[RMDB]
RNA sequence: GGGAACGACUCGAGUAGAGUCGAAAAGAUAUGGAGAAAUCUUACCAAGACGCGUUUGACGUUAAGGGAAUAGCUCGGAAACGAGCUAUUCCCUUAACCGAGCGUCUAACGUAACUUCUCCUAAGUCCUAAAAGAUCUUCUUCGGAAGAUCUUUUAGAAAAGAAACAACAACAACAAC
Reactivity to DMS in 0.01 (KOAc 150mM, MgCl2 10mM, bicine 150mM(pH8.5), 24C), signal-to-noise 3, nucleotides 027 to 126: g000a100u010a300u000g010g010a030g000a020a050a020u010c240u000u000a020c000c230a300a060g010a000c000g010c010g020u000u010u010g040a190c300g000u000u000a000a000g010g010g010a000a000u000a000g020c000u000c020g030g000a110a100a220c000g030a010g000c000u000a010u000u000c020c000c000u000u000a010a000c000c030g020a120g010c010g040u000c000u010a010a040c210g010u000a010a000c170u010u000c010u000c000c010u010a060a140g000u000c030